Conditions: 150 mM KOAc, 10 mM MgCl2 and 150 mM bicine (pH 8.5), 24 C. An RNA of 177 nucleotides, treated with 2A3 and read out base by base. Reactivities are given for positions 27 through 126. For 2A3, 1,115 sequencing reads were counted.
RNA sequence: GGGAACGACUCGAGUAGAGUCGAAAAGAAGUGGCAGGGACAUGCCCCAGAAGCUCGUUCUAGCAACAUAUGUUUGGCUAGUUCGAGCGAUUAGUCUGGAGGAGCGUCCUCUCGCCUCUUAACGAGAGGAUACGUGGGUGUUCGCACCCACGUAUCCAAAAGAAACAACAACAACAAC
Reactivity to 2A3 in 0.01 (KOAc 150mM, MgCl2 10mM, bicine 150mM(pH8.5), 24C), signal-to-noise 2, nucleotides 027 to 126: g130a010a000g000u000g000g000c000a000g000g000g030a000c020a020u300g060c000c000c000c000a000g000a070a020g000c000u010c000g000u000u000c000u000a000g000c000a020a080c020a020u260a060u300g140u100u170u050g140g050c000u000a000g000u000u000c000g010a000g000c020g000a000u010u030a130g030u000c000u010g000g020a170g090g030a050g140c100g030u000c060c000u050c020u020c000g000c000c000u010c000u010u040a110a050c040g010a020g020a000